[RMDB]
Description: Source: RMDB libraries RFM100 and RFMREP, as collected in RNAgym. This 177-nucleotide RNA was probed chemically with 2A3 and DMS. 2A3 adducts were read by reverse transcription with SuperScript II with manganese. The 2A3 profile rests on 4,342 reads. Values cover nucleotides 27 to 126.
RNA sequence: GGGAACGACUCGAGUAGAGUCGAAAACGGCUAUGGCGAUAAACGUUCUUCGCAAUAAACCUAUCGGACCCGGGGGCGGUACCCGGCGCCUCCACCAGAACCCAGGACCGAUGGCCGCAGAGUGUCGAUCCUCAGACAAUUUCGAUUGUCUGAGGAUAAAAGAAACAACAACAACAAC
Reactivity to 2A3 in 0.01 (KOAc 150mM, MgCl2 10mM, bicine 150mM(pH8.5), 24C), signal-to-noise 4, nucleotides 027 to 126: c020g030g000c030u050a020u100g050g000c020g040a040u080a090a180a010c050g080u100u030c040u050u040c020g000c050a010a030u110a130a090a030c020c020u030a040u060c020g040g010a100c000c020c010g000g000g000g000g000c030g010g020u070a090c030c000c000g010g000c000g000c000c000u020c000c010a060c010c020a050g080a120a030c010c000c000a020g010g030a010c000c020g020a030u020g030g010c000c020g010c050a050g040a020g080u070g040u050c020g020
Reactivity to DMS in 0.01 (KOAc 150mM, MgCl2 10mM, bicine 150mM(pH8.5), 24C), signal-to-noise 4, nucleotides 027 to 126: c040g000g010c010u010a070u020g010g000c040g000a060u020a040a120a140c110g010u010u010c080u000u010c040g020c080a100a050u030a020a110a150c050c030u030a070u010c030g010g010a080c020c030c080g000g000g000g010g010c060g020g010u000a050c060c030c010g000g000c060g000c020c000u010c030c010a110c060c080a060g020a210a150c030c020c030a060g000g010a090c000c020g000a050u030g000g000c040c050g040c080a070g010a060g010u020g000u000c030g000